Chemical mapping of a 177-nucleotide RNA with DMS and 2A3. The reactions ran in a buffer of 150 mM KOAc, 10 mM MgCl2 and 150 mM bicine (pH 8.5), at 24 C. For 2A3 the reverse transcriptase was SuperScript II with manganese.
RNA sequence: GGGAACGACUCGAGUAGAGUCGAAAACGUCCCCGUCGUACAGAAUGGUAACAUAUCUCUCCAAAUAUCUGAGCUUGGGUAUACGGGGAAACCCAACCCCUUGGGAAGAUUGGGUAUAUGGCUAAAUACGUAGACUAAUGUUCGCAUUAGUCUACGUAAAAGAAACAACAACAACAAC
Reactivity to DMS in 0.01 (KOAc 150mM, MgCl2 10mM, bicine 150mM(pH8.5), 24C), signal-to-noise 2, nucleotides 027 to 126: c240g020u000c010c000c010c060g010u000c100g020u010a120c160a070g000a080a080u010g000g000u040a100a150c030a010u000a030u000c110u010c090u010c040c050a010a140a150u000a110u000c070u000g000a300g010c070u000u000g000g000g010u010a280u020a100c140g010g000g000g010a050a060a160c000c000c000a010a210c240c000c010c020u030u000g050g010g000a220a070g010a070u000u000g000g000g000u000a030u000a030u010g000g000c060u000a060a150a130u010
Reactivity to 2A3 in 0.01 (KOAc 150mM, MgCl2 10mM, bicine 150mM(pH8.5), 24C), signal-to-noise 2, nucleotides 027 to 126: c020g110u020c010c000c000c010g140u110c030g050u090a060c040a100g140a100a100u110g050g060u100a210a030c000a020u060a060u020c050u010c020u030c140c020a070a090a090u200a060u050c020u000g010a020g130c010u040u030g010g000g010u020a020u000a020c020g020g000g000g000a040a040a000c010c010c010a010a020c000c010c000c030u020u000g030g010g020a010a000g040a010u030u070g000g010g020u020a050u020a020u030g010g030c030u060a150a010a040u070